[RMDB]
RNA sequence: GGGAACGACUCGAGUAGAGUCGAAAAAAUAAUUGGCGAAACUCGUUUCGCGUUGGCUGCCUAAUUAAAGGAAUUAGCGUGCCUUCAUGCUAAGGGUUUGAUAUCUGCUAAAACCCGGUGCAUUCAUAAGACUUUUGCUUGUUCGCAAGCAAAAGAAGAUUUCUGAUAGCUUCGGCUAUCAGAAAUCAAAAGAAACAACAACAACAAC
Reactivity to 2A3 in 0.01 (KOAc 150mM, MgCl2 10mM, bicine 150mM(pH8.5), 24C), signal-to-noise 1, nucleotides 027 to 156: a000a000u170a020a050u090u020g020g000c000g000a030a010a050c010u050c100g010u000u030u020c030g000c010g010u030u000g000g000c050u040g010c050c000u010a060a040u040u090a080a260a160g100g020a100a060u010u010a010g010c080g020u040g010c030c000u040u050c050a030u010g000c040u040a020a050g030g000g010u020u030u010g090a050u030a090u180c090u160g000c050u100a020a040a000a000c000c000c000g030g000u010g000c010a000u030u080c070a020u060a160a100g050a150c000u000u030u000u040g010c010u020u000g030u040u020c240g000c100a010a010g000c000a000a000a000a000g020a000a040